[RMDB]
RNA sequence: GGGAACGACUCGAGUAGAGUCGAAAAGAAUGCCGCCAGUCCCCCAGCCGUAAGGCAUUGGCAUCUCACGCCCACCAAAUGGCACUUGAUAGCCUGGGAUUGCGACGGCUUUCAGUAUGGCACGGCAUCGUGAUCACCAGUUCGCUGGUGAUCACGAAAAAGAAACAACAACAACAAC
Reactivity to DMS in 0.01 (KOAc 150mM, MgCl2 10mM, bicine 150mM(pH8.5), 24C), signal-to-noise 2, nucleotides 027 to 126: g010a040a040u000g010c000c000g000c060c030a060g010u010c020c000c040c300c200a090g020c000c000g040u020a070a130g010g020c040a110u000u000g010g000c010a070u010c050u010c190a030c160g000c030c010c140a140c080c170a060a080a110u010g020g000c030a210c160u020u000g020a040u010a190g000c020c000u010g000g000g000a070u000u000g000c060g000a160c070g000g040c000u000u000u010c030a090g010u000a130u000g000g000c110a030c100g000g000c090a180
Chemical mapping of a 177-nucleotide RNA with DMS. For DMS, 1,033 sequencing reads were counted. For DMS the reverse transcriptase was MarathonRT.